Chemical mapping of a 177-nucleotide RNA with DMS and 2A3.
For 2A3 the reverse transcriptase was SuperScript II with manganese.
[RMDB]
RNA sequence: GGGAACGACUCGAGUAGAGUCGAAAAGGCCAGGAUCUCGGUAGCGCCGAACUUCACGUUGUCGCCGCUGACCCGCCAAUCGGCAGCCAGGGCCAACGUCAGGCCCGCUCCCAGCGCGUAUCCGGUAGUCGUGCGUAAAUUUCGAUUUACGCACGACAAAAGAAACAACAACAACAAC
Reactivity to DMS in 0.01 (KOAc 150mM, MgCl2 10mM, bicine 150mM(pH8.5), 24C), signal-to-noise 2, nucleotides 027 to 126: g000g030c020c050a140g000g000a040u000c070u000c040g010g050u000a120g020c110g040c040c020g000a070a080c060u000u000c110a060c050g020u000u000g010u000c130g020c110c020g000c030u000g000a040c030c060c130g010c010c090a080a100u030c120g000g040c030a160g030c040c040a060g010g000g010c000c000a010a030c090g010u000c160a130g000g020c000c000c010g010c120u000c010c020c000a120g010c120g010c060g020u000a070u000c010c030g030g010u010a100
Reactivity to 2A3 in 0.01 (KOAc 150mM, MgCl2 10mM, bicine 150mM(pH8.5), 24C), signal-to-noise 1, nucleotides 027 to 126: g040g070c020c030a010g030g070a110u100c090u030c110g020g050u040a010g000c020g030c060c040g050a030a050c020u250u170c090a000c030g040u020u130g110u120c100g000c060c020g100c030u030g030a120c060c080c100g030c010c020a110a190u240c070g000g000c000a000g020c000c000a060g000g040g040c030c000a020a020c010g060u040c020a030g000g020c020c010c020g030c000u000c000c000c000a020g010c050g000c010g000u060a090u070c020c050g040g030u080a030

Source: RMDB library OK2TST, as collected in RNAgym.